[RMDB]
RNA sequence: GGGAACGACUCGAGUAGAGUCGAAAAGCUGAACGCCCCUCCCGUAGGUCAUCGUGCAGCGCUGCCUGGCCGGGAAGAGCCUGACCCACAUCAAGGCGGGCUGCAUCCUGUGUGGGUACCUGAAGCUGACGCCCAUGUUUCUCAUGGUCAUGCCAGGCUUUUCCUGUAUUUUCGAAUACAGGAAAAGAAAAGAAACAACAACAACAAC
Reactivity to 2A3 in 0.01 (KOAc 150mM, MgCl2 10mM, bicine 150mM(pH8.5), 24C), signal-to-noise 3, nucleotides 027 to 156: g030c050u070g080a140a020c110g070c030c010c020c040u060c100c030c020g070u070a030g000g060u060c110a140u090c170g060u080g010c040a020g030c170g020c090u020g030c000c010u060g020g030c060c000g030g000g010a110a030g050a040g070c030c020u120g100a250c000c010c020a040c030a110u190c130a110a020g030g000c000g000g020g000c010u010g030c020a070u080c010c010u070g010u020g000u090g070g010g010u020a040c010c030u090g030a090a010g000c030u020g040a050c080g030c000c000c000a020u030g020u000u100u000c110u030c040a080u010g010g010u040c040a080u210g110c000c010a010g020g030
Reactivity to DMS in 0.01 (KOAc 150mM, MgCl2 10mM, bicine 150mM(pH8.5), 24C), signal-to-noise 1, nucleotides 027 to 156: g030c030u000g000a140a160c040g010c110c030c020c000u020c000c050c040g060u000a030g030g030u000c070a090u000c040g030u000g010c030a040g020c020g000c080u030g000c000c030u010g020g110c000c020g020g020g000a100a130g010a190g030c000c040u020g020a060c010c010c050a100c130a170u000c180a160a050g010g020c080g000g010g020c000u000g020c010a080u000c010c030u010g020u000g000u000g000g010g010u000a020c030c060u000g010a150a110g010c010u010g000a070c080g020c090c000c000a160u000g000u000u000u000c020u000c010a130u020g000g000u000c100a080u030g000c000c000a070g010g010